[RMDB]
RNA sequence: GGGAACGACUCGAGUAGAGUCGAAAAGUCCAUAGCCAGAUAUCUUUUCCAUCGCAUUCGUGGUGCACCCGUUGUACCAGUUGAAGAAUGGCGGACAAAUUUUGUGGAUGCAACGGAUCGCCGCCGACAGGCUAUCGGGAUUCGUCCCGAUAGCCUGAAAAGAAACAACAACAACAAC
Reactivity to DMS in 0.01 (KOAc 150mM, MgCl2 10mM, bicine 150mM(pH8.5), 24C), signal-to-noise 2, nucleotides 027 to 126: g020u010c020c000a100u010a130g000c000c050a100g010a120u010a040u010c040u000u010u000u000c030c030a060u000c050g000c060a110u000u010c040g000u000g010g010u000g000c050a020c090c090c100g010u000u000g030u000a010c020c020a100g010u000u000g020a070a100g020a090a100u010g020g020c090g010g010a060c120a040a060a090u000u000u010u000g020u000g000g010a100u000g010c040a050a020c090g000g010a030u000c060g000c000c030g020c000c010g020a170
Reactivity to 2A3 in 0.01 (KOAc 150mM, MgCl2 10mM, bicine 150mM(pH8.5), 24C), signal-to-noise 2, nucleotides 027 to 126: g060u030c010c010a070u040a030g020c040c020a100g010a120u100a130u210c030u050u070u060u060c010c030a040u070c050g020c030a070u000u120c070g040u080g010g000u010g030c010a020c000c070c060g040u040u010g000u000a060c000c040a030g030u100u240g070a130a070g040a180a060u140g040g050c040g000g040a030c070a040a180a080u180u170u080u080g170u060g050g070a120u090g040c010a000a060c030g040g030a030u110c000g030c000c030g010c020c020g000a030